An RNA of 177 nucleotides, treated with 2A3 and DMS and read out base by base.

[RMDB]
RNA sequence: GGGAACGACUCGAGUAGAGUCGAAAAGGUGGCUCGAACGCACGUGCGAAGAGACGACUCAACGAGUCACCGAUUUAGCAUGUUCGUCCUUUUGGGGCUCCCGGCAUAAUUUUGGACGUUCAUGCGAGGGAUGGUGUUGCUUCGGCAAUACCAUCCCAAAAGAAACAACAACAACAAC
Reactivity to 2A3 in 0.01 (KOAc 150mM, MgCl2 10mM, bicine 150mM(pH8.5), 24C), signal-to-noise 5, nucleotides 027 to 126: g000g000u030g000g000c000u020c000g030a140a010c070g040c040a100c130g070u170g110c050g090a180a030g090a060g020a150c050g100a130c050u020c060a020a000c000g000a000g000u000c000a010c000c000g000a000u000u000u040a020g020c000a000u000g010u000u010c010g010u050c000c010u040u140u100u160g030g010g030g040c020u030c020c010c000g040g000c060a080u080a160a250u140u210u160u130g000g000a000c000g000u000u000c010a000u000g000c000g010a130
Reactivity to DMS in 0.01 (KOAc 150mM, MgCl2 10mM, bicine 150mM(pH8.5), 24C), signal-to-noise 2, nucleotides 027 to 126: g000g020u010g000g000c000u000c020g000a180a120c160g000c000a140c240g020u020g020c120g000a140a080g020a160g000a130c170g020a150c010u000c050a070a180c000g000a010g010u020c000a000c000c010g020a050u020u000u100a080g000c020a000u000g000u000u000c000g000u000c020c000u030u000u030u000g000g030g000g020c030u010c080c000c020g030g000c070a030u000a050a060u030u000u100u030g000g000a010c020g000u000u000c000a010u000g000c000g000a090
DMS adducts were read by reverse transcription with MarathonRT. Reactivities are given for positions 27 through 126.